[RMDB]
RNA sequence: GGGAACGACUCGAGUAGAGUCGAAAAGCUUGAAUACCUAUGUCUAUCUUUUGUUUUCUUAUGUUUAUCAAGUUAUUCCUUUAAACAUUUUCUAAACUGUAAGAAUAAUGUGAGGCUGGGCUCAAUGGUAAAGGGUUUUAUUCGUAAAACCCUUUACAAAAGAAACAACAACAACAAC
Reactivity to 2A3 in 0.01 (KOAc 150mM, MgCl2 10mM, bicine 150mM(pH8.5), 24C), signal-to-noise 1, nucleotides 027 to 126: g060c000u010u080g020a040a060u170a160c000c000u070a060u170g020u010c020u070a130u090c040u150u100u060u050g000u040u190u040u070c000u040u090a040u120g000u020u000u080a200u080c010a000a000g010u030u020a010u090u110c000c000u040u140u260a100a180a030c070a040u040u040u040u030c030u060a000a060a170c030u040g080u120a060a000g020a020a080u120a120a040u110g020u040g070a020g000g040c060u040g070g020g020c000u000c090a000a090u080g010
Reactivity to DMS in 0.01 (KOAc 150mM, MgCl2 10mM, bicine 150mM(pH8.5), 24C), signal-to-noise 2, nucleotides 027 to 126: g000c010u000u010g010a080a150u010a070c030c030u000a060u000g000u020c020u010a100u010c030u010u000u000u000g000u000u000u000u000c020u010u000a050u000g000u000u000u000a110u010c030a010a020g010u000u010a100u000u000c030c020u000u010u010a050a060a040c010a010u010u000u010u000c030u010a030a020a100c090u000g010u020a040a050g000a070a080u020a050a040u020g010u000g020a030g000g000c040u000g000g000g000c110u010c110a030a050u010g010